[RMDB]
The record gives the reactivity of an RNA of 177 nucleotides to DMS and 2A3. For DMS the reverse transcriptase was MarathonRT. Conditions: 150 mM KOAc, 10 mM MgCl2 and 150 mM bicine (pH 8.5), 24 C. Source: RMDB libraries RFM100 and RFMREP, as collected in RNAgym. Reactivities are given for positions 27 through 126.

RNA sequence: GGGAACGACUCGAGUAGAGUCGAAAACAAUGCCAACCUCCACAGGGUGGACUAAGGUUGAGGUAUAGAAUCCUAUUCGCUCCUGGUAGGAGAAAUUCUAUAUUGCUUAUAUACGUGCUUGUGCACGGAGUGUGGAGGAUUUCGAUCCUCCACACUCAAAAGAAACAACAACAACAAC
Reactivity to DMS in 0.01 (KOAc 150mM, MgCl2 10mM, bicine 150mM(pH8.5), 24C), signal-to-noise 3, nucleotides 027 to 126: c080a070a060u050g010c030c020a050a060c070c030u010c010c070a050c090a270g000g050g030u000g030g000a080c180u010a130a050g000g000u000u010g000a160g020g000u010a030u000a050g010a010a030u000c010c020u000a010u000u010c100g020c060u020c070c000u040g000g000u010a010g000g010a130g000a070a130a020u000u000c000u000a010u000a020u000u010g020c060u010u020a070u010a110u040a220c020g010u000g000c010u010u030g020u030g000c000a020c010g010
Reactivity to 2A3 in 0.01 (KOAc 150mM, MgCl2 10mM, bicine 150mM(pH8.5), 24C), signal-to-noise 6, nucleotides 027 to 126: c030a000a130u170g030c030c000a010a060c020c000u030c020c000a040c050a150g220g120g040u010g000g010a030c040u140a090a050g030g000u020u040g050a010g060g010u020a010u000a020g030a020a020u030c000c000u000a020u020u160c090g020c060u070c030c020u060g040g010u020a020g010g020a050g050a050a100a000u030u000c040u010a040u010a020u030u080g030c060u240u050a050u040a010u030a300c020g010u000g020c040u210u270g100u250g140c000a010c000g010